[RMDB]
An RNA of 177 nucleotides, treated with 2A3 and DMS and read out base by base. Values cover nucleotides 27 to 126. Conditions: 150 mM KOAc, 10 mM MgCl2 and 150 mM bicine (pH 8.5), 24 C. For 2A3 the reverse transcriptase was SuperScript II with manganese. For DMS the reverse transcriptase was MarathonRT. It was measured as part of the RMDB library OK1LIB.
RNA sequence: GGGAACGACUCGAGUAGAGUCGAAAAGACGCCUGUGUGGCGAAGCGAGCAUGAGAUGGAGCCGCAAGAGAAGAUGAGAUAGAAGCGGCAGGAUAGAUUGCUCGCAAAAAGAUCCAUCUCACAGAGACCAUAAUGCGGUAUUCGUACCGCAUUAUGGAAAAGAAACAACAACAACAAC
Reactivity to 2A3 in 0.01 (KOAc 150mM, MgCl2 10mM, bicine 150mM(pH8.5), 24C), signal-to-noise 4, nucleotides 027 to 126: g050a000c060g040c030c010u180g060u110g090u140g140g050c020g020a040a010g010c010g010a010g000c010a030u060g000a010g010a060u060g070g040a010g000c000c000g000c020a080a050g130a000g060a270a020g080a160u280g100a020g060a130u180a130g060a130a030g000c000g030g000c020a010g140g090a000u040a050g080a030u030u070g000c010u000c010g000c000a000a000a000a000a000g050a000u000c000c010a020u010c000u010c000a030c020a040g100a000g040a100
Reactivity to DMS in 0.01 (KOAc 150mM, MgCl2 10mM, bicine 150mM(pH8.5), 24C), signal-to-noise 2, nucleotides 027 to 126: g000a200c030g000c010c000u030g020u050g000u090g000g000c000g040a070a130g000c040g020a040g020c000a000u020g000a300g010a040u000g000g000a080g010c000c000g020c000a080a190g010a220g010a110a060g000a110u010g010a200g000a140u010a100g000a230a150g020c010g010g020c000a040g000g000a000u020a070g010a150u000u000g000c000u000c000g000c000a050a030a020a100a040g000a110u000c030c010a120u000c020u000c000a100c110a160g000a070g000a150